[RMDB]
The data come from the RNA Mapping Database (RMDB), library OK2TRN. The record gives the reactivity of an RNA of 177 nucleotides to DMS and 2A3. Conditions: 150 mM KOAc, 10 mM MgCl2 and 150 mM bicine (pH 8.5), 24 C.
RNA sequence: GGGAACGACUCGAGUAGAGUCGAAAAGUGAGGCUUAUUGGUACUCAGACUGAGAUACAAGCAGACUACAGUUUAGCAAUAAAAAUGUUGACUGCAGUCAGGGAUGCUUAUUCUGACAUAGGGCACAAGCUCAUAAGACGUUCGCGUCUUAUGAGCUAAAAGAAACAACAACAACAAC
Reactivity to DMS in 0.01 (KOAc 150mM, MgCl2 10mM, bicine 150mM(pH8.5), 24C), signal-to-noise 2, nucleotides 027 to 126: g000u000g030a110g010g030c060u000u000a140u000u000g020g010u030a090c160u000c010a020g010a070c100u000g010a050g010a090u000a150c160a030a090g000c100a100g020a020c000u000a020c000a000g010u010u000u010a000g010c000a010a050u010a010a070a080a130a110u010g020u000u000g000a010c000u000g000c030a000g010u000c000a080g000g030g000a110u000g000c010u010u020a060u000u010c010u010g020a050c060a070u010a070g020g000g030c020a050c100a100
Reactivity to 2A3 in 0.01 (KOAc 150mM, MgCl2 10mM, bicine 150mM(pH8.5), 24C), signal-to-noise 1, nucleotides 027 to 126: g100u080g010a110g050g050c000u080u080a060u170u250g090g030u010a090c020u030c010a010g030a110c030u020g060a000g000a080u080a140c060a010a060g000c010a000g000a010c000u010a030c000a010g030u050u100u170a020g020c000a020a060u120a170a150a080a050a060u060g000u000u030g000a000c000u000g000c000a000g000u000c000a020g040g140g000a030u100g020c010u030u010a030u050u030c040u020g040a040c020a050u100a090g030g010g020c000a010c030a160